Record summary:
Structure probing data (DMS and 2A3) for a 177-nucleotide construct. 2A3 adducts were read by reverse transcription with SuperScript II with manganese. For DMS, 1,184 sequencing reads were counted. It was measured as part of the RMDB library M2PK50. DMS adducts were read by reverse transcription with MarathonRT. Reactivities are given for positions 27 through 126.

RNA sequence: GGGAACGACUCGAGUAGAGUCGAAAAGCUAGAAGGUUCGCCUUCUAGCAAAGAAAGCGGAAAACACCGAAAUAAAACGGUGAGGGCCGCAUCCACCCAUAAAAAGGAUCAACUUCGGUUGAUCCAAGUAAAAGUGUUACUUCGGUAACACUUUUACAAAAGAAACAACAACAACAAC
Reactivity to DMS in 0.01 (KOAc 150mM, MgCl2 10mM, bicine 150mM(pH8.5), 24C), signal-to-noise 2, nucleotides 027 to 126: g020c010u000a010g000a010a020g000g000u020u010c130g050c000c010u000u020c010u000a010g010c000a000a070a160g010a050a110a150g000c000g000g000a010a020a080a180c010a040c010c010g020a090a110a110u000a070a120a070a120c000g010g010u000g000a080g000g000g010c000c000g030c000a050u000c090c170a110c030c010c010a070u040a040a030a070a120a080g000g000a010u000c010a000a010c000u000u020c130g050g010u000u000g000a020u000c000c000a010a020
Reactivity to 2A3 in 0.01 (KOAc 150mM, MgCl2 10mM, bicine 150mM(pH8.5), 24C), signal-to-noise 1, nucleotides 027 to 126: g010c000u000a010g000a010a010g000g030u060u120c110g040c000c000u000u000c010u010a010g000c000a000a000a000g000a000a020a000g000c010g010g020a060a040a000a020c000a000c010c010g080a080a160a080u210a030a130a030a030c030g000g000u010g000a040g000g060g020c000c000g000c010a000u000c000c020a020c030c000c000a020u200a050a120a040a020a020g000g000a000u000c000a000a010c010u070u120c300g080g020u020u000g010a000u010c000c000a000a000